[RMDB]
RNA sequence: GGGAACGACUCGAGUAGAGUCGAAAAAUAUUUUAUCAAUGGUAGGAGAGCGUUCUUAACCGCAAUGAAGGUAUACCGUGAGGAGUGCUGGAGCGUUAAGAAGUGAGAAUGCCGGUAUGAGUAGCGCAAGAUAAGUGAGAAUCUUAUCCACCGUAAGGUGAUAAACAUCGUUCGCGAUGUUUAUCACAAAAGAAACAACAACAACAAC
Reactivity to DMS in 0.01 (KOAc 150mM, MgCl2 10mM, bicine 150mM(pH8.5), 24C), signal-to-noise 3, nucleotides 027 to 156: a120u000a050u010u000u000u000a090u000c060a070a080u000g050g030u000a080g030g000a110g010a200g020c020g010u000u010c030u000u000a070a030c040c060g050c040a070a080u000g000a120a180g000g030u000a120u000a110c020c030g020u000g000a130g010g000a300g070u000g000c020u010g010g010a060g040c050g020u000u000a020a060g020a050a060g000u000g020a120g000a050a070u000g040c030c020g040g030u000a030u000g010a140g030u010a090g010c050g000c050a090a050g000a040u000a020a040g020u000g000a200g000a170a180u000c010u000u000a040u000c000c010a130c050c040g010u010a070a120g010
Reactivity to 2A3 in 0.01 (KOAc 150mM, MgCl2 10mM, bicine 150mM(pH8.5), 24C), signal-to-noise 4, nucleotides 027 to 156: a010u100a070u030u160u090u080a160u080c040a070a050u090g010g020u040a050g020g030a040g000a010g040c050g030u040u020c010u020u030a040a030c110c090g000c060a100a280u060g020a040a010g020g000u020a020u020a060c010c020g020u050g040a060g020g010a050g020u040g000c010u010g000g010a010g000c010g000u000u000a040a000g010a020a020g050u020g040a040g050a080a010u070g030c040c030g030g000u080a070u070g030a010g030u060a010g010c010g000c050a060a040g000a010u010a010a000g000u000g010a030g020a020a000u010c000u000u010a010u000c000c040a050c010c020g080u100a040a050g090